[RMDB]
Notes
Structure probing data (2A3 and DMS) for a 177-nucleotide construct.

RNA sequence: GGGAACGACUCGAGUAGAGUCGAAAACUUUCUGCAUAAAUGCCCUCAUUAGAGGCACUUAUAAAGUCAGGAAGAAAGCACCCACCUGCCAUGGUGCGGGGUUCAAAACGAAGGAAAGGAGGGGAAGCAGUACCUAAUUCUUCGGAAUUAGGUACUGAAAAGAAACAACAACAACAAC
Reactivity to 2A3 in 0.01 (KOAc 150mM, MgCl2 10mM, bicine 150mM(pH8.5), 24C), signal-to-noise 2, nucleotides 027 to 126: c010u010u030u000c000u010g010c000a040u020a050a050a010u020g020c050c040c000u020c040a150u090u300a050g020a090g010g000c000a000c000u100u060a030u050a120a190a040g090u180c000a020g000g010a010a000g010a040a080a000g020c010a060c000c000c010a020c000c020u030g050c000c050a160u230g090g010u100g040c050g020g000g010g000u020u050c030a020a050a070a080c080g110a040a030g050g020a100a090a030g030g010a020g000g000g000g000a000a020g080
Reactivity to DMS in 0.01 (KOAc 150mM, MgCl2 10mM, bicine 150mM(pH8.5), 24C), signal-to-noise 2, nucleotides 027 to 126: c030u000u000u000c000u000g010c070a250u000a020a020a010u000g000c160c010c020u010c060a190u040u000a110g000a050g010g000c000a000c000u000u000a020u010a130a110a140g030u010c010a000g000g010a010a010g030a120a110a110g010c140a090c000c000c020a070c040c030u000g020c070c040a110u000g010g010u010g030c030g010g000g000g000u000u000c140a080a050a070a130c170g000a100a080g000g020a040a040a080g000g010a050g000g000g000g000a110a070g020